[RMDB]
RNA sequence: GGGAACGACUCGAGUAGAGUCGAAAAAGCAACAGCAACAGAGCCAGCAGCAACUUCAGCUUCACACUUCUCAACGAACGUCGGAUGUUCCGGCGAUCAGUAAUGACGGAAGAAGCUGUGGCGUGACACCCGUGGGAGUGUUCGCACUCCCACGGGUAAAAGAAACAACAACAACAAC
Reactivity to DMS in 0.01 (KOAc 150mM, MgCl2 10mM, bicine 150mM(pH8.5), 24C), signal-to-noise 1, nucleotides 027 to 126: a010g000c010a070a250c140a010g000c120a040a100c040a300g000a230g020c050c070a030g050c050a030g000c200a030a280c000u080u000c030a040g000c000u040u000c080a010c240a080c040u000u000c040u000c030a200a120c160g000a000a000c030g000u000c000g030g000a050u110g030u030u000c000c000g000g000c030g000a000u020c000a050g000u170a020a150u000g000a040c190g000g000a160a130g000a000a300g000c000u000g050u000g000g000c000g000u000g000a200c040
Reactivity to 2A3 in 0.01 (KOAc 150mM, MgCl2 10mM, bicine 150mM(pH8.5), 24C), signal-to-noise 2, nucleotides 027 to 126: a000g080c130a020a120c010a060g030c020a030a040c010a090g120a040g030c040c000a030g040c000a010g000c000a040a040c000u080u040c040a070g080c060u120u080c010a070c020a060c090u140u000c030u000c100a030a050c040g010a030a010c000g000u070c000g000g040a160u300g240u300u150c000c000g000g040c000g000a060u010c000a000g010u030a070a150u190g020a070c080g040g000a010a000g000a020a020g010c000u000g020u040g090g000c010g050u110g010a020c040